This 177-nucleotide RNA was probed chemically with DMS and 2A3.
For DMS the reverse transcriptase was MarathonRT.
Values cover nucleotides 27 to 126.
[RMDB]
RNA sequence: GGGAACGACUCGAGUAGAGUCGAAAAGCUAACGUGAUGCCGGAAGGCAAUAUUGGCGUCAUUGGCGCUUCCGGUACCGGGAUUCAGGAGCUGUGUUCGCAGAUUGCGCUGGCAGGGGAGGGAAUUAGAUUCCCGUCUAUUUCGAUAGACGGGAAUCAAAAGAAACAACAACAACAAC
Reactivity to DMS in 0.01 (KOAc 150mM, MgCl2 10mM, bicine 150mM(pH8.5), 24C), signal-to-noise 3, nucleotides 027 to 126: g020c050u010a070a110c100g000u010g020a100u010g010c000c010g020g010a060a080g010g010c040a050a030u000a060u000u010g010g010c080g040u010c150a050u000u000g000g020c060g010c020u000u000c020c000g000g000u000a040c040c000g000g000g000a160u010u010c140a100g000g000a090g020c040u000g000u000g010u000u000c110g000c050a080g000a160u010u000g010c080g040c090u000g010g000c090a090g000g000g020g000a090g010g030g010a070a070u030u010a060
Reactivity to 2A3 in 0.01 (KOAc 150mM, MgCl2 10mM, bicine 150mM(pH8.5), 24C), signal-to-noise 2, nucleotides 027 to 126: g030c020u060a110a000c060g090u050g060a100u050g010c030c000g020g070a040a000g160g000c010a060a050u150a060u050u150g080g020c020g080u040c060a050u030u080g210g020c120g030c000u000u000c000c010g000g020u030a050c030c000g000g000g050a040u110u110c020a050g000g080a040g060c050u030g000u020g090u130u110c050g000c020a020g010a210u090u250g040c060g000c040u030g050g000c070a070g050g000g010g050a060g000g060g020a010a010u070u000a050